The data come from the RNA Mapping Database (RMDB), library RNAMAK. This 207-nucleotide RNA was probed chemically with DMS and 2A3. The 2A3 profile rests on 4,695 reads. DMS adducts were read by reverse transcription with MarathonRT. For 2A3 the reverse transcriptase was SuperScript II with manganese. Values cover nucleotides 27 to 156. For DMS, 6,860 sequencing reads were counted. The reactions ran in a buffer of 150 mM KOAc, 10 mM MgCl2 and 150 mM bicine (pH 8.5), at 24 C.
RNA sequence: GGGAACGACUCGAGUAGAGUCGAAAAUCAUUCUGCGUUCGCGCAGAAUGAAAAAACCGUAGGCGCAAGGCUGCGAACGUCCAAUUCGAAAGAGUUGAAGACGGAGGUAUAGCCGCAAGCCUAAACGGAAAAAUAGCAUCGAUUCGUCGAUGCUAAAGAAUUAUAAGUAGUUCGCUACUUAUAAUUCAAAAGAAACAACAACAACAAC
Reactivity to DMS in 0.01 (KOAc 150mM, MgCl2 10mM, bicine 150mM(pH8.5), 24C), signal-to-noise 3, nucleotides 027 to 156: u010c000a020u010u000c000u000g020c000g030u000u000c300g060c020g040c000a010g020a000a010u020g010a000a060a060a110a070a100c010c010g020u000a050g010g010c000g000c180a150a180g000g020c010u000g040c040g000a080a280c020g000u000c010c020a000a040u010u000c000g000a230a110a240g010a050g010u000u000g000a110a110g030a050c010g010g000a020g040g040u000a060u000a050g000c010c000g010c100a060a190g010c020c000u000a020a020a070c030g000g010a020a040a090a100a180u010a010g010c000a000u000c000g020a050u000u010c300g010u010c000g020a040u010g030c000u000a000a040a090
Reactivity to 2A3 in 0.01 (KOAc 150mM, MgCl2 10mM, bicine 150mM(pH8.5), 24C), signal-to-noise 5, nucleotides 027 to 156: u030c000a000u000u000c010u010g000c000g040u020u110c240g020c010g000c110a000g000a000a010u000g000a030a000a000a000a000a010c030c000g010u040a020g010g000c060g010c290a070a030g010g000c010u050g060c070g080a160a020c000g000u000c000c000a010a000u000u000c000g050a100a080a090g010a060g010u000u010g050a190a100g000a020c010g020g010a060g090g080u200a130u180a220g000c010c020g050c090a010a010g030c000c000u000a040a080a000c010g020g070a030a080a010a010a050u070a010g000c000a000u000c000g020a010u020u060c140g070u000c000g100a000u000g000c000u000a010a000a000